[RMDB]
RNA sequence: GGGAACGACUCGAGUAGAGUCGAAAAAUGUGCAGUUUUAAAGCUGCAGCACCUUCCAUUUAGGUCCCAGCUCUCCCUCUGGAAAAUGCCUGCUCCUCACCAGAGAUUCCUCCCUGGAGCACCUGCCCUUACAGCCGUAGUUCGCUACGGCUGUAAGAAAAGAAACAACAACAACAAC
Reactivity to DMS in 0.01 (KOAc 150mM, MgCl2 10mM, bicine 150mM(pH8.5), 24C), signal-to-noise 2, nucleotides 027 to 126: a090u020g040u010g000c020a020g010u000u010u000u000a050a170a230g010c000u010g010c000a040g000c070a060c030c040u000u000c060c030a070u000u000u010a070g020g020u000c000c000c000a110g000c050u000c070u000c040c030c010u020c040u010g000g000a050a030a080a100u010g020c060c030u010g000c050u010c020c020u010c100a100c070c030a050g000a090g010a170u000u000c050c020u010c020c020c010u010g000g010a060g020c050a090c090c040u010g000c100c050
This 177-nucleotide RNA was probed chemically with DMS. The reactions ran in a buffer of 150 mM KOAc, 10 mM MgCl2 and 150 mM bicine (pH 8.5), at 24 C. Values cover nucleotides 27 to 126.